[RMDB]
RNA sequence: GGGAACGACUCGAGUAGAGUCGAAAAGGUAUGAUUAGUGUGAGACCUAGGAACCGUAGGGGUAUUCUCAAAGGAAGCUUUUGCAGUGACGCCCAUGUAAGUGGGAUAUAACAACAGAACUCGUAUGUGUGGCACAGAGAGUUCGCUCUCUGUGCAAUCACAAGAUUAUGUUCGCAUAAUCUUGUGAAAAAGAAACAACAACAACAAC
Reactivity to 2A3 in 0.01 (KOAc 150mM, MgCl2 10mM, bicine 150mM(pH8.5), 24C), signal-to-noise 4, nucleotides 027 to 156: g050g010u060a040u120g060a090u090u140a060g030u010g030u030g070a090g020a030c000c010u050a070g020g050a050a060c080c050g050u070a040g000g030g010g000u050a150u100u070c090u030c000a080a090a010g050g020a060a030g030c010u050u050u090u090g000c050a040g000u010g050a040c050g020c000c000c010a010u040g060u130a060a100g020u030g000g030g000a010u040a020u020a080a020c070a000a030c010a030g070a080a020c050u050c160g040u080a120u100g090u010g010u060g060g000c000a000c000a000g000a000g000a000g000u050u020c120g020c020u010c000u000c010u000g000u000g000c000a000a000
Reactivity to DMS in 0.01 (KOAc 150mM, MgCl2 10mM, bicine 150mM(pH8.5), 24C), signal-to-noise 3, nucleotides 027 to 156: g030g030u000a050u010g010a100u000u010a070g010u000g020u010g000a110g000a110c030c020u000a110g010g010a070a080c090c060g020u010a080g020g030g000g020u000a060u020u000c040u020c020a040a130a150g010g010a100a070g010c050u030u000u000u000g000c050a100g010u010g000a130c110g020c010c000c010a040u000g000u000a060a110g040u000g000g010g000a050u000a040u010a090a070c050a060a080c050a070g010a050a050c040u000c070g010u000a070u010g030u000g030u020g010g040c000a030c010a020g020a070g000a040g030u000u000c300g000c000u000c000u000c000u000g000u000g010c000a010a040